[RMDB]
RNA sequence: GGGAACGACUCGAGUAGAGUCGAAAAAGCCGUCAGGUGUUCCUCCCCCCGAGAGGGGAAGAGUGAGGCUUAUCCCGGGGAACUCGGCGAAUCGUCCCCGCAUGGCAGAGACCGAGCCCCCUUCGGAAAACCCCUGAGUUCGCUCAGGGGAAAAGAAACAACAACAACAAC
Reactivity to DMS in 0.01 (KOAc 150mM, MgCl2 10mM, bicine 150mM(pH8.5), 24C), signal-to-noise 7, nucleotides 027 to 129: a070g020c020c020g030u030c140a120g030g050u030g030u040u020c000c000u000c020c030c000c020c020c040g020a140g040a190g070g000g000g030a000a000g030a080g000u030g030a210g010g020c000u000u000a080u030c000c010c010g000g020g010g010a090a140c060u030c030g020g010c100g030a120a090u000c090g010u000c010c050c010c060g010c220a060u030g020g020c130a130g030a140g010a190c000c040g020a100g020c080c010c000c010c040u010u000c070g040g000a090a050a120a170
Reactivity to 2A3 in 0.01 (KOAc 150mM, MgCl2 10mM, bicine 150mM(pH8.5), 24C), signal-to-noise 3, nucleotides 027 to 129: a000g020c020c010g070u060c040a090g000g000u050g050u070u020c000c000u020c030c010c010c000c000c010g160a080g050a110g100g030g010g000a030a010g040a020g010u130g000a000g020g000c020u020u090a090u010c020c020c030g030g010g000g010a080a070c060u050c030g000g050c080g010a000a030u040c000g020u020c030c020c000c020g030c050a110u090g030g020c060a050g040a000g010a120c000c000g020a020g050c000c000c000c000c000u040u050c020g050g020a010a060a030a040